[RMDB]
RNA sequence: GGGAACGACUCGAGUAGAGUCGAAAACGCCAGUCGGAGUUCGAGCUGCAUGCGCGCGCGAUCCUCGGCCUGCCGGUCGAGCCCGCGCUCGCGACGCCCGCCGCGUCGGCCGUGAUCUACGGCGGGACUGGGGCAUAAUAUUCGUAUUAUGCCCCAGAAAAGAAACAACAACAACAAC
Reactivity to 2A3 in 0.01 (KOAc 150mM, MgCl2 10mM, bicine 150mM(pH8.5), 24C), signal-to-noise 2, nucleotides 027 to 126: c020g040c000c010a010g070u070c030g060g060a090g060u170u130c030g030a050g060c020u040g010c090a130u160g030c020g000c000g000c000g000c010g040a060u060c030c000u000c000g000g010c020c030u180g160c090c170g000g020u020c000g000a000g010c000c030c010g030c010g000c020u010c010g000c000g010a010c010g020c000c010c010g030c010c000g000c000g020u030c020g020g060c070c020g090u120g070a070u040c040u110a030c000g010g020c000g010g000g020a010
Reactivity to DMS in 0.01 (KOAc 150mM, MgCl2 10mM, bicine 150mM(pH8.5), 24C), signal-to-noise 5, nucleotides 027 to 126: c110g010c030c020a040g010u010c040g000g020a130g010u000u010c050g020a080g010c050u000g010c120a120u010g010c030g020c150g000c010g000c020g000a080u010c170c010u000c010g010g000c000c000u000g020c300c160g010g020u000c000g000a020g020c300c050c010g000c020g000c010u000c020g000c010g000a060c120g000c050c020c070g010c060c050g000c050g010u000c020g010g000c040c020g030u010g000a060u010c070u000a040c010g000g010c000g000g000g000a150